[RMDB]
RNA sequence: GGGAACGACUCGAGUAGAGUCGAAAAUCAAGCCGUUUCGACGGCUUGAACACUUUAGAGUCCUGAGGGACUACGAUCCAGUGUACGGGAGGAACUCUAAGGCCUAGCCCUGCUUCGGCAGGGCUAACACUGUUGUGUGGUUCGCCACACAACAGUGAAAAGAAACAACAACAACAAC
Reactivity to 2A3 in 0.01 (KOAc 150mM, MgCl2 10mM, bicine 150mM(pH8.5), 24C), signal-to-noise 3, nucleotides 027 to 126: u020c010a010a000g020c010c000g020u010u040u090c170g120a020c000g000g000c010u030u000g000a010a000c010a000c010u040u040u050a020g000a000g030u020c000c010u040g020a160g020g100g060a010c020u120a100c210g190a290u030c040c060a110g060u050g060u230a070c060g030g000g050a020g020g040a090a030c000u000c000u020a000a020g040g020c010c000u000a010g000c000c000c000u000g000c000u020u070c160g080g000c020a000g000g010g000c000u010a000a000
Reactivity to DMS in 0.01 (KOAc 150mM, MgCl2 10mM, bicine 150mM(pH8.5), 24C), signal-to-noise 3, nucleotides 027 to 126: u000c000a010a000g010c010c010g010u010u000u010c190g000a050c000g040g000c000u000u000g000a000a070c130a150c030u000u010u000a040g010a010g000u010c000c000u010g010a230g010g000g000a040c020u010a050c160g000a140u010c120c060a160g010u000g020u010a130c070g010g000g010a080g010g000a040a050c020u000c000u010a020a050g000g000c010c000u000a030g000c010c010c000u000g010c000u000u010c150g030g000c000a010g000g010g020c000u000a000a060

Source information
This 177-nucleotide RNA was probed chemically with 2A3 and DMS. 2A3 adducts were read by reverse transcription with SuperScript II with manganese. The RNA was probed in 150 mM KOAc, 10 mM MgCl2 and 150 mM bicine (pH 8.5) at 24 C. The DMS profile rests on 2,382 reads. It was measured as part of the RMDB library M2PK50. For 2A3, 3,206 sequencing reads were counted.